[RMDB]
RNA sequence: GGGAACGACUCGAGUAGAGUCGAAAACAGACAAAAGUAUACACAUUAAUACAUUAUGUUCAAAAAGCCUGAUUGUAAAAGAUGGUUCAUUUGCUUAUAAGAUAACUUACUAUCUCCUCCUCCAAGCUGGUUGACCGCUUCAACAAAUCUCUCGUGAUAUUAUGGGUGGUUUCGACCACCCAUAAUAAAAAGAAACAACAACAACAAC
Reactivity to 2A3 in 0.01 (KOAc 150mM, MgCl2 10mM, bicine 150mM(pH8.5), 24C), signal-to-noise 1, nucleotides 027 to 156: c030a020g180a040c070a010a060a060a000g000u070a100u170a110c050a000c020a030u160u180a090a100u150a130c020a010u120u070a110u210g060u100u140c020a020a070a000a020a050g000c000c020u130g030a080u130u030g070u080a020a040a040a080g020a050u040g040g000u000u050c000a030u020u150u050g010c000u120u120a050u050a180a140g030a040u130a140a050c030u080u140a080c020u050a020u090c040u030c050c050u000c000c000u000c000c000a030a000g020c020u030g020g020u060u000g000a020c030c000g030c020u010u000c000a020a040c010a050a170a000u020c060u060c010u000c020g080u080g110a080
Reactivity to DMS in 0.01 (KOAc 150mM, MgCl2 10mM, bicine 150mM(pH8.5), 24C), signal-to-noise 1, nucleotides 027 to 156: c040a120g030a090c070a110a100a090a200g000u000a140u010a070c060a120c060a090u040u010a090a190u000a130c040a110u000u010a040u000g040u000u000c040a060a030a150a080a160g020c030c040u000g030a090u000u000g000u010a030a070a090a140g010a080u000g020g010u010u000c050a140u000u000u010g030c040u010u000a130u000a040a060g010a180u010a030a120c050u000u010a040c080u000a020u000c000u000c010c020u000c030c050u010c020c020a010a200g020c010u000g000g020u010u000g080a060c050c020g010c080u000u000c060a000a060c040a030a040a060u000c020u000c030u000c040g080u000g010a160